Chemical mapping of a 170-nucleotide RNA with DMS and 2A3.
For 2A3, 2,652 sequencing reads were counted.
It was measured as part of the RMDB library 15KLIB.
For DMS, 3,034 sequencing reads were counted.
The reactions ran in a buffer of 150 mM KOAc, 10 mM MgCl2 and 150 mM bicine (pH 8.5), at 24 C.
RNA sequence: GGGAACGACUCGAGUAGAGUCGAAAAGUAUCUAAAGGUUUCUUUAAGGAGGGCUCUUCAGUGACGCUCAAACAUUUUUUCUUUGCUCAAGAUGGUAAUGCUGCUAUUACAGAUUAUAAUUACUAUUAAAGAGCACUGUUCGCAGUGCUCAAAAGAAACAACAACAACAAC
Reactivity to DMS in 0.01 (KOAc 150mM, MgCl2 10mM, bicine 150mM(pH8.5), 24C), signal-to-noise 3, nucleotides 027 to 129: g000u030a050u060c150u000a090a040a110g030g000u010u010u010c020u060u000u000a110a180g000g000a110g000g000g000c130u030c110u000u000c130a080g000u050g000a000c110g020c100u000c090a100a050a050c060a000u110u000u020u000u070u000c010u050u000u030g020c070u040c120a080a120g000a060u030g040g040u040a040a000u070g000c040u040g030c130u060a140u000u100a000c050a030g060a110u000u100a150u060a210a080u010u070a020c000u000a100u070u000a000a000a000
Reactivity to 2A3 in 0.01 (KOAc 150mM, MgCl2 10mM, bicine 150mM(pH8.5), 24C), signal-to-noise 2, nucleotides 027 to 129: g090u020a040u020c040u180a300a000a020g140g000u000u000u000c000u030u000u080a030a010g000g000a000g020g030g030c000u000c000u050u030c000a020g000u000g120a000c030g050c070u000c000a030a030a000c010a040u000u000u000u070u070u040c020u000u110u050g050c030u060c030a020a040g000a000u010g070g010u000a010a010u000g010c000u000g000c070u130a070u140u030a030c010a000g000a000u060u060a060u070a260a000u000u000a010c020u010a010u060u050a160a130a020